Conditions: 150 mM KOAc, 10 mM MgCl2 and 150 mM bicine (pH 8.5), 24 C. An RNA of 177 nucleotides, treated with 2A3 and read out base by base. It was measured as part of the RMDB library RFM100. 2A3 adducts were read by reverse transcription with SuperScript II with manganese.
[RMDB]
RNA sequence: GGGAACGACUCGAGUAGAGUCGAAAAGCAUGAAGCUGGUUAUUGGUGUUGCUUCUGCAGCUGCCAUUAGCCAUUGAUGAUCGCUCUUCUCUUCUUUCGGGAGAGUGAGAGGGAGAGAAUGCCAUCUCGGGCAAUAUUCCUUCGGGAAUAUUGCCCGAAAAGAAACAACAACAACAAC
Reactivity to 2A3 in 0.01 (KOAc 150mM, MgCl2 10mM, bicine 150mM(pH8.5), 24C), signal-to-noise 2, nucleotides 027 to 126: g020c020a020u100g050a010a040g040c040u030g000g000u000u000a000u000u000g010g010u000g070u300u070g040c010u140u230c110u300g000c030a000g000c000u060g030c000c000a000u000u000a010g000c000c010a040u060u120g070a100u010g020a020u040c090g000c240u000c000u030u000c010u000c000u040u070c050u030u260u190c020g090g020g000a040g000a010g050u080g000a010g000a000g000g010g000a050g000a000g010a080a000u030g000c060c000a080u080c000u020